[RMDB]
RNA sequence: GGGAACGACUCGAGUAGAGUCGAAAAGGAGCUCGAUGCUAGAUGGUUCCUAAAUCUUUAGGGAUCACUACUUUACGUUAGUAGAGUAGUGUUAUGAUAAGAUUAUCGUAACAUCUAGCAUCGAGGAGAUAGGAGUCAGAUUCGUUUGAUUUCUAUCAAAAGAAACAACAACAACAAC
Reactivity to DMS in 0.01 (KOAc 150mM, MgCl2 10mM, bicine 150mM(pH8.5), 24C), signal-to-noise 6, nucleotides 027 to 126: g010g010a110g010c000u000c000g010a010u000g000c010u000a000g000a000u000g010g010u000u000c000c000u000a010a020a130u040c200u030u010u010a020g000g000g000a000u000c000a010c000u000a010c000u000u000u000a000c000g020u050u090a110g010u000a000g000a000g010u000a010g010u000g010u000u000a000u000g010a010u000a030a190g010a190u040u000a010u000c000g020u010a010a010c000a010u000c000u000a000g000c000a000u000c000g010a010g010g010a070
Reactivity to 2A3 in 0.01 (KOAc 150mM, MgCl2 10mM, bicine 150mM(pH8.5), 24C), signal-to-noise 9, nucleotides 027 to 126: g120g010a060g040c000u000c000g000a000u000g000c000u000a000g000a000u010g010g010u010u000c000c000u010a020a040a070u180c120u040u050u020a000g000g000g000a000u010c000a000c000u000a000c000u010u000u000a010c020g160u100u240a060g000u010a000g000a000g000u000a000g000u000g000u000u000a000u000g030a010u030a040a190g190a210u220u100a010u030c000g000u000a000a000c000a000u000c000u000a000g000c000a000u000c000g000a000g000g000a000